[RMDB]
Conditions: 150 mM KOAc, 10 mM MgCl2 and 150 mM bicine (pH 8.5), 24 C. This 177-nucleotide RNA was probed chemically with 2A3 and DMS. Reactivities are rounded to 0.1 and cut off at 0 and 3. The data come from the RNA Mapping Database (RMDB), libraries RFM100 and RFMREP.

RNA sequence: GGGAACGACUCGAGUAGAGUCGAAAAGUUUUGGUGCUUGACAGGAACGUUCGUAUAGUACGAGAGGAACUACGAACGGGUGCCACUGGUGUAUCGGUUGUCCGAGAGGGCAUGUGCCGAGCAGCUAUCUGUAUGGCAAUUUCGAUUGCCAUACAGAAAAAGAAACAACAACAACAAC
Reactivity to 2A3 in 0.01 (KOAc 150mM, MgCl2 10mM, bicine 150mM(pH8.5), 24C), signal-to-noise 3, nucleotides 027 to 126: g020u020u060u120u090g050g000u050g030c040u090u100g090a070c070a150g040g140a130a010c010g000u010u000c000g000u000a020u000a030g000u000a010c020g000a010g000a040g170g000a040a000c000u000a000c000g000a000a000c000g020g000g000u030g030c010c000a070c050u010g040g030u050g050u080a230u110c030g000g010u070u050g010u000c010c030g030a030g040a030g060g000g050c080a060u130g090u150g070c000c000g030a010g000c030a000g040c010u020a060
Reactivity to DMS in 0.01 (KOAc 150mM, MgCl2 10mM, bicine 150mM(pH8.5), 24C), signal-to-noise 4, nucleotides 027 to 126: g020u000u000u000u010g010g020u010g010c040u020u010g000a080c140a130g000g010a110a140c020g000u010u000c010g000u000a010u000a090g010u000a130c000g000a270g000a210g000g000a120a090c160u000a010c000g000a020a020c000g020g010g020u000g000c040c040a080c170u020g020g000u000g010u000a120u000c000g000g000u000u000g020u000c010c030g010a230g000a210g030g020g010c020a070u050g010u020g000c010c020g000a020g000c080a040g000c040u010a120